An RNA of 207 nucleotides, treated with 2A3 and DMS and read out base by base. High DMS reactivity at an A or C suggests that its Watson-Crick edge is free. The DMS profile rests on 4,007 reads. The RNA was probed in 150 mM KOAc, 10 mM MgCl2 and 150 mM bicine (pH 8.5) at 24 C. The data come from the RNA Mapping Database (RMDB), library OK3TST. For DMS the reverse transcriptase was MarathonRT. The 2A3 profile rests on 1,728 reads.

[RMDB]
RNA sequence: GGGAACGACUCGAGUAGAGUCGAAAAGAAGCGUCAAAGUCUGAGAUUCCAGCCCUGGUUGGUUCAACAGCAACACUUGCUCUCAAUCACUCCAGUGUUGCUCACCACGGGGUGUUCCAAAAUUGGGAAUGGGAGGAGAUGGAGGAGAAGAGAAGGGCCCAGAUAUACUUUUCGAAGUAUAUCUGGGAAAAGAAACAACAACAACAAC
Reactivity to 2A3 in 0.01 (KOAc 150mM, MgCl2 10mM, bicine 150mM(pH8.5), 24C), signal-to-noise 2, nucleotides 027 to 156: g020a030a030g020c030g020u050c060a060a060a050g040u030c040u070g040a030g000a140u100u010c050c010a000g000c000c000c010u100g180g000u140u100g070g000u110u180c080a120a070c030a090g000c000a000a000c010a000c010u020u060g020c020u050c020u030c140a110a150u190c030a060c120u020c030c010a010g000u000g000u020u020g000c010u000c010a030c010c000a010c010g010g010g000g000u010g010u060u080c020c020a050a090a060a090u100u110g050g010g020a030a060u050g090g000g010a010g010g010a010g000a040u070g000g020a010g010g030a040g000a060a030g030a030g030a020a060g070g030g000
Reactivity to DMS in 0.01 (KOAc 150mM, MgCl2 10mM, bicine 150mM(pH8.5), 24C), signal-to-noise 2, nucleotides 027 to 156: g000a050a060g020c030g050u000c040a040a090a160g040u000c050u000g000a150g000a150u010u000c040c030a200g000c020c010c010u010g010g000u000u010g020g000u010u000c070a080a120c110a010g030c020a020a010c010a020c000u000u000g040c030u010c030u000c060a200a130u010c150a060c040u000c000c030a140g000u000g050u000u000g010c000u000c030a040c030c010a040c010g000g000g000g040u000g010u010u000c050c020a030a050a080a120u010u010g020g020g020a070a100u000g000g020g010a090g010g010a130g000a090u000g000g010a100g000g010a140g010a030a120g000a070g010a070a080g030g000g010